[RMDB]
RNA sequence: GGGAACGACUCGAGUAGAGUCGAAAAGAUAUGGAACCACCAGCUCUAUGAAGUGGAUCUCAUCGGAAACGAUGAGAGUCCAUGGAGAGCGGUGGUUCCUAAGUCAAAAGCUGAUGUUCGCAUCAGCGCUACACUCAGCGUUCGCGCUGAGUGUAGCAAAAGAAACAACAACAACAAC
Reactivity to 2A3 in 0.01 (KOAc 150mM, MgCl2 10mM, bicine 150mM(pH8.5), 24C), signal-to-noise 2, nucleotides 027 to 126: g010a020u100a020u150g000g000a010a000c010c000a010c010c020a230g030c010u040c010u040a300u260g140a190a030g000u020g010g000a020u010c000u000c000a000u010c000g000g060a060a040a040c010g000a010u010g030a000g000a010g100u000c010c000a000u020g010g040a020g000a000g010c000g020g000u000g000g010u000u010c010c000u000a010a010g010u000c000a000a020a100a180g000c010u000g000a010u000g030u110u210c300g000c090a020u000c020a000g000c000
Reactivity to DMS in 0.01 (KOAc 150mM, MgCl2 10mM, bicine 150mM(pH8.5), 24C), signal-to-noise 3, nucleotides 027 to 126: g000a070u020a300u000g000g010a000a000c000c000a000c000c000a150g070c000u020c000u000a300u000g000a180a200g000u000g000g010a300u000c010u000c010a000u000c010g010g000a110a070a230c010g000a010u000g000a010g000a020g000u000c010c000a000u000g000g000a030g020a000g020c000g000g000u010g000g000u000u000c000c010u000a000a050g010u010c040a180a060a070a170g020c000u010g010a010u010g040u000u010c300g020c020a020u000c000a000g010c010